An RNA of 207 nucleotides, treated with 2A3 and DMS and read out base by base. Reactivities are rounded to 0.1 and cut off at 0 and 3. For 2A3 the reverse transcriptase was SuperScript II with manganese. The reactions ran in a buffer of 150 mM KOAc, 10 mM MgCl2 and 150 mM bicine (pH 8.5), at 24 C. Reactivities are given for positions 27 through 156. It was measured as part of the RMDB library OK3TST.
RNA sequence: GGGAACGACUCGAGUAGAGUCGAAAAUUUGAUUUCAAGACUCUGAAGCACUUGAAGAGUAUUGCUCAUGGUGCAUUCCUUAAGUAGACAUGACAGGAACCAACUGAAUUAAUGAUCACCAACAAAAGCCAGUGUUUGCAAUUUCAUCAAAGCAUAACUCAGUCAGUGAUUUCGAUCACUGACUGAGAAAAGAAACAACAACAACAAC
Reactivity to 2A3 in 0.01 (KOAc 150mM, MgCl2 10mM, bicine 150mM(pH8.5), 24C), signal-to-noise 2, nucleotides 027 to 156: u050u010u110g020a050u020u080u150c070a070a050g010a060c050u070c020u100g090a100a010g000c030a020c040u040u040g070a140a080g020a040g030u110a130u080u190g000c000u020c030a050u060g000g030u060g020c010a060u000u060c020c000u050u010a110a080g030u030a030g090a020c020a150u080g040a030c010a050g000g070a030a060c060c030a020a070c030u050g040a090a050u060u080a070a060u140g010a040u080c010a010c070c000a010a070c010a020a130a020a000g040c030c000a010g010u010g050u040u070u070g020c030a070a110u020u030u140c000a080u000c050a120a030a000g050c080a040u120a100a070
Reactivity to DMS in 0.01 (KOAc 150mM, MgCl2 10mM, bicine 150mM(pH8.5), 24C), signal-to-noise 1, nucleotides 027 to 156: u000u000u000g050a190u020u000u000c040a020a110g010a040c020u020c030u010g000a190a070g000c000a140c050u020u020g020a100a100g010a200g050u000a120u000u000g020c060u000c050a080u010g030g090u000g000c050a190u010u010c010c050u000u020a100a120g080u000a050g050a060c070a090u000g040a150c020a060g000g010a070a010c060c040a010a300c050u010g010a030a030u000u000a060a070u030g010a130u000c020a110c020c040a030a220c020a100a080a070a130g050c000c030a050g000u000g000u000u010u040g000c000a090a140u000u000u000c000a150u010c090a100a050a110g020c090a060u000a040a150